[RMDB]
RNA sequence: GGGAACGACUCGAGUAGAGUCGAAAAGUCACUUAGAAGGUCGUCGCAAGAUUGGCAAUUUAGGUGAAAAACGGACAAAACCAACUCCGGAUCAAUAUGCUGAGAUCGUCCACAACUUUCGAGUUGGGGACAAUGUCCUCUUCGGAGGACAUUGUCCAAAAGAAACAACAACAACAAC
Reactivity to DMS in 0.01 (KOAc 150mM, MgCl2 10mM, bicine 150mM(pH8.5), 24C), signal-to-noise 2, nucleotides 027 to 126: g020u000c020a000c000u020u000a000g000a030a050g020g070u000c010g030u000c010g020c300a110a140g010a050u010u010g050g020c010a020a050u000u000u010a010g010g000u010g000a020a070a040a140a110c110g010g010a070c080a080a100a110a230c030c020a060a070c100u020c030c030g000g020a050u000c100a060a040u010a050u010g000c150u000g000a050g000a060u020c020g010u010c000c000a100c080a050a040c120u000u000u010c190g030a030g030u000u000g000g040
Reactivity to 2A3 in 0.01 (KOAc 150mM, MgCl2 10mM, bicine 150mM(pH8.5), 24C), signal-to-noise 2, nucleotides 027 to 126: g000u000c000a010c010u000u030a000g000a040a000g070g010u000c010g020u010c010g000c040a060a050g020a050u260u300g070g000c010a010a020u030u010u030a030g000g010u030g030a100a000a000a000a000c020g020g010a000c030a040a140a040a010c020c020a010a030c030u000c020c080g010g030a020u080c010a060a090u060a060u300g110c060u060g010a040g000a160u030c050g020u020c030c010a060c010a060a070c020u050u140u100c110g040a020g000u010u000g000g020